Chemical mapping of a 207-nucleotide RNA with 2A3. Reactivities are rounded to 0.1 and cut off at 0 and 3. The reactions ran in a buffer of 150 mM KOAc, 10 mM MgCl2 and 150 mM bicine (pH 8.5), at 24 C.

[RMDB]
RNA sequence: GGGAACGACUCGAGUAGAGUCGAAAAGGGGUCAAAGGUGGAAAUGGACAUGAACCUCCUGAAGCCUCCACGGGAGAAGUUCAACAGCCAUUUCGUAACAUCCUUUGACGGAGGCACCCAAAAGCCGAAAUUAAGCGUUCGCGCUUAAUUUCGGCAAGCCUUCUCAUAACUUCGGUUAUGAGAAGGCAAAAGAAACAACAACAACAAC
Reactivity to 2A3 in 0.01 (KOAc 150mM, MgCl2 10mM, bicine 150mM(pH8.5), 24C), signal-to-noise 1, nucleotides 027 to 156: g070g020g040g000u000c000a010a000a030g010g000u000g030g050a020a000a020u010g010g010a050c060a140u070g010a010a000c000c000u000c000c000u010g050a160a000g010c010c010u000c010c000a000c010g000g020g000a000g030a300a120g060u000u000c030a100a050c060a190g130c000c000a000u000u000u000c000g010u010a010a010c000a150u300c000c000u000u000u010g000a000c000g000g000a000g000g000c010a010c000c030c000a000a110a060a010g000c000c000g000a000a000a010u010u000a010a000g010c010g110u060u240c300g010c000g000c130u000u000a000a010u000u000u000c010g000g000c010a000a000